[RMDB]
RNA sequence: GGGAACGACUCGAGUAGAGUCGAAAAGAAAGAAAGAAAGCUGACCCUUCUGCUGACGGAUCUUGUGGAGCACCACAGUGCAGAAGGGGAGAGAAGCUUUAAUGCCGACCGGCUGGGCAGCCUUGAAAAAACGGAUUCUUCUUCGGAAGAAUCCGAACUAUAUGAUGCAGUUCGCUGCAUCAUAUAGAAAAGAAACAACAACAACAAC
Reactivity to 2A3 in 0.01 (KOAc 150mM, MgCl2 10mM, bicine 150mM(pH8.5), 24C), signal-to-noise 3, nucleotides 027 to 156: g030a010a030a000g090a020a090a010g050a020a030a010g000c000u050g060a080c010c010c000u000u000c010u020g000c010u050g070a090c060g090g010a100u120c100u220u100g010u030g020g060a120g100c090a120c090c010a010c010a030g060u040g050c000a000g000a010a000g000g000g020g000a000g000a000g000a010a000g000c000u000u030u050a060a030u090g020c010c000g020a030c010c020g050g010c020u040g000g010g020c020a020g040c030c000u050u070g060a090a060a000a000a000a010c000g010g000a000u000u000c000u010u010c000u010u050c190g080g000a000a000g000a000a000u000c000c000g000a000a000
Reactivity to DMS in 0.01 (KOAc 150mM, MgCl2 10mM, bicine 150mM(pH8.5), 24C), signal-to-noise 2, nucleotides 027 to 156: g030a130a080a120g000a120a110a110g010a070a050a020g010c000u000g020a140c000c000c010u000u000c000u010g000c010u000g020a140c140g000g010a080u010c050u020u000g030u000g010g010a220g030c210a100c020c000a040c040a060g030u010g000c010a040g000a040a040g010g000g020g000a050g010a070g000a120a040g040c010u000u000u000a030a100u000g020c000c040g020a110c040c040g010g010c060u010g000g000g000c050a060g020c070c030u000u000g000a000a090a070a060a100a160c010g010g020a030u010u000c000u000u000c000u000u010c300g030g000a040a010g000a020a000u000c010c010g000a000a030